Structure probing data (DMS and 2A3) for a 177-nucleotide construct.
It was measured as part of the RMDB library OK2TST.
For 2A3 the reverse transcriptase was SuperScript II with manganese.
DMS adducts were read by reverse transcription with MarathonRT.
Values cover nucleotides 27 to 126.

RNA sequence: GGGAACGACUCGAGUAGAGUCGAAAAAGUAAAAGUAUUUGGUGAAAUGGAGUUUUGGCUAUCACUGCUAAAAGUAACCGCGAUUAUUGCCAUGAUUGCGGCAGGGCUAGGCAUUAUGAUGUUUGGCGUGUCUUGGGCAAUUCGUUGCCCAAGACACAAAAGAAACAACAACAACAAC
Reactivity to DMS in 0.01 (KOAc 150mM, MgCl2 10mM, bicine 150mM(pH8.5), 24C), signal-to-noise 1, nucleotides 027 to 126: a060g010u000a150a030a070a140g000u020a090u000u000u000g010g030u000g020a000a070a070u000g010g010a160g020u010u000u010u010g000g000c070u000a110u000c050a100c140u000g010c050u010a050a070a050a090g020u040a130a100c050c020g010c030g020a010u000u000a070u000u000g010c230c160a130u000g000a010u010u000g050c000g030g020c090a000g010g000g010c030u000a040g020g020c000a050u000u000a110u010g010a040u000g010u000u000u000g090g000c080
Reactivity to 2A3 in 0.01 (KOAc 150mM, MgCl2 10mM, bicine 150mM(pH8.5), 24C), signal-to-noise 1, nucleotides 027 to 126: a000g080u070a040a070a000a020g020u060a190u080u130u050g110g040u120g030a070a040a060u120g000g060a080g020u010u070u030u030g000g000c030u010a030u100c050a060c000u020g050c010u040a090a030a000a140g040u040a070a000c000c000g040c020g010a000u040u000a020u150u130g060c090c060a050u040g000a040u000u060g040c050g010g030c060a060g110g030g060c000u020a040g080g020c030a020u000u160a060u300g130a020u030g040u000u030u080g030g020c010